RNA sequence: GGGAACGACUCGAGUAGAGUCGAAAAAAUACAAGAGUAUUCUUGCCUCCUUCGAUGGUAGAACUUGGCAAGAAUCUCUGAAUAAUUUGAGGUUGAUGGUUAAGGGAGAUUUGAAACCAAAAAUGGACUAAGUGAUUAUGUUCGCAUAAUCACUUAGAAAAGAAACAACAACAACAAC
Reactivity to DMS in 0.01 (KOAc 150mM, MgCl2 10mM, bicine 150mM(pH8.5), 24C), signal-to-noise 7, nucleotides 027 to 126: a070a050u010a080c110a130a020g000a010g010u020a020u000u000c000u000u000g010c000c000u000c030c040u000u000c020g010a170u010g010g020u010a140g010a020a020c020u000u000g000g010c000a010a020g000a010a000u000c000u000c000u000g010a130a120u010a060a050u000u000u000g010a200g010g000u000u000g010a120u000g000g010u000u010a070a100g000g010g010a120g010a060u000u000u010g010a110a060a070c030c020a020a070a030a060a070u000g000g020a300
Reactivity to 2A3 in 0.01 (KOAc 150mM, MgCl2 10mM, bicine 150mM(pH8.5), 24C), signal-to-noise 5, nucleotides 027 to 126: a010a000u250a040c070a060a010g000a010g020u150a020u000u010c000u000u000g010c000c000u010c020c000u030u060c060g210a200u250g120g080u100a090g020a050a040c040u050u050g010g010c010a010a000g000a010a000u010c000u000c000u000g020a020a020u130a070a060u050u040u090g050a020g000g030u030u040g020a030u040g000g050u040u060a050a060g080g050g000a070g020a040u050u070u100g050a060a020a020c020c050a000a010a020a050a050u080g020g010a010
This 177-nucleotide RNA was probed chemically with DMS and 2A3. Source: RMDB library OK2TST, as collected in RNAgym. High 2A3 reactivity points to a flexible backbone, as in loops and unpaired stretches. The RNA was probed in 150 mM KOAc, 10 mM MgCl2 and 150 mM bicine (pH 8.5) at 24 C. 2A3 adducts were read by reverse transcription with SuperScript II with manganese.